[RMDB]
RNA sequence: GGGAACGACUCGAGUAGAGUCGAAAACGGGGUGGUGACCACCAGGAGUUCGGCGUUGGGGAUCAGUUGAGCCACCGAGAUGGCGACGUCGCCGGUUCCGGGCGGCAAGUCCAGCAGCAGCACGUCCAGUCGUCAUUAGGUUCGCCUAAUGACGACUAAAAGAAACAACAACAACAAC
Reactivity to DMS in 0.01 (KOAc 150mM, MgCl2 10mM, bicine 150mM(pH8.5), 24C), signal-to-noise 2, nucleotides 027 to 126: c130g000g010g010g000u010g040g000u000g010a180c090c080a080c030c050a110g000g000a120g020u000u010c060g030g020c060g010u000u000g000g020g000g000a050u000c090a090g020u010u010g020a170g000c000c080a040c060c020g030a040g000a190u000g020g000c000g020a130c180g010u000c030g040c050c020g000g000u000u000c080c040g020g000g020c020g010g000c030a060a120g000u000c040c010a060g000c070a060g000c010a040g020c080a030c110g020u020c040c100

The record gives the reactivity of an RNA of 177 nucleotides to DMS. The DMS profile rests on 1,233 reads. Values cover nucleotides 27 to 126. For DMS the reverse transcriptase was MarathonRT. The RNA was probed in 150 mM KOAc, 10 mM MgCl2 and 150 mM bicine (pH 8.5) at 24 C.